[RMDB]
RNA sequence: GGGAACGACUCGAGUAGAGUCGAAAAUCUUGCACCUUCGGGUGCAAGAAAAUGUAAGCGCAUGCGAGCGCACAGCGCACGCUGAAAAACUGGGCAAAAGAAAAACUCAGCACUUCGGUGCUGAGAAGUUUAUUUAAGGGUUCGCCCUUAAAUAAACAAAAGAAACAACAACAACAAC
Reactivity to 2A3 in 0.01 (KOAc 150mM, MgCl2 10mM, bicine 150mM(pH8.5), 24C), signal-to-noise 2, nucleotides 027 to 126: u000c000u000u000g000c000a010c000c000u040u060c240g120g010g000u000g000c000a010a000g000a000a010a000a000u090g000u040a100a050g000c050g000c080a020u140g020c040g050a040g080c040g020c070a080c030a190g020c030g000c020a010c000g050c010u070g040a060a040a060a060a040c070u090g000g100g000c030a060a040a100a090g120a050a140a050a030a050c000u010c000a000g010c000a000c000u020u100c170g070g000u000g000c010u000g000a000g000a000a000
Reactivity to DMS in 0.01 (KOAc 150mM, MgCl2 10mM, bicine 150mM(pH8.5), 24C), signal-to-noise 3, nucleotides 027 to 126: u000c000u000u000g010c000a010c010c000u000u020c230g030g010g030u010g000c000a010a010g010a010a020a110a060u000g010u010a080a140g010c060g010c050a050u000g010c030g020a040g020c120g000c070a070c110a080g000c020g030c040a020c040g010c010u000g000a070a070a060a130a090c100u000g020g010g040c060a090a050a110a090g010a070a040a090a080a090c000u000c000a000g010c000a000c000u000u000c180g010g010u000g000c000u000g000a010g010a010a050